The record gives the reactivity of an RNA of 207 nucleotides to 2A3 and DMS. Reactivities are rounded to 0.1 and cut off at 0 and 3. For 2A3, 3,595 sequencing reads were counted. The reactions ran in a buffer of 150 mM KOAc, 10 mM MgCl2 and 150 mM bicine (pH 8.5), at 24 C. 2A3 adducts were read by reverse transcription with SuperScript II with manganese.

[RMDB]
RNA sequence: GGGAACGACUCGAGUAGAGUCGAAAAACCUUAUUUUGAGUAGCUGAGGGAUUUGGCCCAUAGAAGCUUCAGCAACCGACUUUAAAUAGCACGGUGCUAAUACCAACGAGCAACUCGAAUGAUAAGUAAAACGUUGACAAGUUCGCUUGUCAACGAAGUUCUUAUAUCAGUUCGCUGAUAUAAGAACAAAAGAAACAACAACAACAAC
Reactivity to 2A3 in 0.01 (KOAc 150mM, MgCl2 10mM, bicine 150mM(pH8.5), 24C), signal-to-noise 5, nucleotides 027 to 156: a000c040c000u070u090a100u020u040u040u050g010a010g010u030a010g000c020u030g030a070g000g040g040a090u070u100u160g070g000c010c010c010a050u100a110g160a110a020g000c000u100u150c050a000g000c010a020a040c000c000g010a020c030u100u080u150a090a190a270u150a130g010c030a020c080g000g010u020g000c000u000a000a020u050a080c020c000a040a050c060g080a020g020c020a020a030c010u020c040g020a020a050u040g070a040u060a140a010g050u080a050a120a020a010c010g000u000u000g000a000c000a000a010g010u020u110c150g050c150u000u010g000u000c030a000a000c000g000a010a000
Reactivity to DMS in 0.01 (KOAc 150mM, MgCl2 10mM, bicine 150mM(pH8.5), 24C), signal-to-noise 2, nucleotides 027 to 156: a080c040c000u010u000a110u000u000u000u010g000a050g020u000a100g000c300u020g050a120g010g000g000a110u000u000u020g000g000c000c000c020a090u000a080g010a190a120g000c000u000u000c020a040g020c000a050a030c000c000g010a060c000u000u000u000a110a100a070u000a020g040c020a060c000g030g010u020g000c010u000a050a060u000a050c010c040a040a060c060g010a050g070c030a110a090c020u000c010g010a090a050u000g010a110u000a130a080g000u000a040a060a130a200c010g030u010u010g010a020c010a010a040g010u000u000c300g030c000u000u030g000u000c000a010a000c000g020a000a040